About this RNA
The record gives the reactivity of an RNA of 170 nucleotides to DMS and 2A3. For DMS, 14,979 sequencing reads were counted. For 2A3 the reverse transcriptase was SuperScript II with manganese. The reactions ran in a buffer of 150 mM KOAc, 10 mM MgCl2 and 150 mM bicine (pH 8.5), at 24 C.
RNA sequence: GGGAACGACUCGAGUAGAGUCGAAAAGCGGGGUAAACCCAUACUAUGGGAACUGCUGGGUUCCUCGGAUGUCGAUCCCCUCUCCCGUUCGGGAAAAGGGGGACUCCGGAACUCCCUGCAGGCUGGGACACAGGCACGUUCGCGUGCCUGAAAAGAAACAACAACAACAAC
Reactivity to DMS in 0.01 (KOAc 150mM, MgCl2 10mM, bicine 150mM(pH8.5), 24C), signal-to-noise 4, nucleotides 027 to 129: g010c050g020g020g020g050u000a020a030a040c010c000c010a030u050a100c200u070a050u020g030g010g030a160a120c030u000g020c040u050g010g020g050u020u020c070c020u030c070g020g020a030u100g040u010c020g000a120u000c140c000c000c000u030c160u000c020c010c010g040u050u110c070g030g030g040a030a020a060a050g000g000g000g000g000a010c000u010c000c060g000g000a040a050c110u010c000c000c000u030g010c000a080g020g040c060u040g020g000g030a000c200a080
Reactivity to 2A3 in 0.01 (KOAc 150mM, MgCl2 10mM, bicine 150mM(pH8.5), 24C), signal-to-noise 4, nucleotides 027 to 129: g020c010g000g010g000g030u090a030a080a110c010c010c020a000u080a090c180u160a070u050g020g010g010a050a060c010u010g030c030u040g040g000g000u030u000c010c010u020c000g010g020a090u250g030u070c060g080a190u150c010c000c000c010u010c000u000c000c020c030g090u260u250c180g000g000g000a000a020a000a020g000g000g010g000g000a000c000u020c000c000g000g000a000a020c020u040c010c000c010u010g000c010a020g000g000c020u000g020g030g030a010c030a020